[RMDB]
RNA sequence: GGGAACGACUCGAGUAGAGUCGAAAACUUCAGAACACUCUUUGGGGGAAUGUCUUGGAUCACACAAGGGCUAAUGGGUGCCCUACUACUCUGGAUGGGCGUCAACGCACGAGACCGAUCAAUUGCAGCGUACUAAUACGUUCGCGUAUUAGUACGCAAAAGAAACAACAACAACAAC
Reactivity to 2A3 in 0.01 (KOAc 150mM, MgCl2 10mM, bicine 150mM(pH8.5), 24C), signal-to-noise 4, nucleotides 027 to 126: c010u120u070c010a020g040a130a010c040a030c050u010c030u050u120u120g060g000g000g000g000a030a070u090g010u000c010u010u050g080g020a050u060c030a000c020a020c020a140a040g030g000g020c010u070a050a120u160g060g040g000u030g010c000c000c000u010a030c010u020a000c000u000c050u040g040g060a040u030g100g000g010c010g000u030c030a090a050c030g020c030a000c050g020a050g040a080c010c030g070a090u120c030a050a140u120u140g090c120a040
Reactivity to DMS in 0.01 (KOAc 150mM, MgCl2 10mM, bicine 150mM(pH8.5), 24C), signal-to-noise 2, nucleotides 027 to 126: c080u040u040c050a090g000a010a070c120a080c060u000c010u000u000u000g000g040g000g010g000a100a020u020g000u010c000u000u020g000g000a070u000c120a070c060a030c060a130a090g010g000g000c000u000a070a080u020g000g000g050u000g000c030c010c000u000a100c100u000a080c060u020c050u040g000g000a080u000g000g000g000c010g010u030c010a000a060c110g010c030a030c000g030a050g020a170c090c000g000a060u020c070a110a080u020u070g000c170a130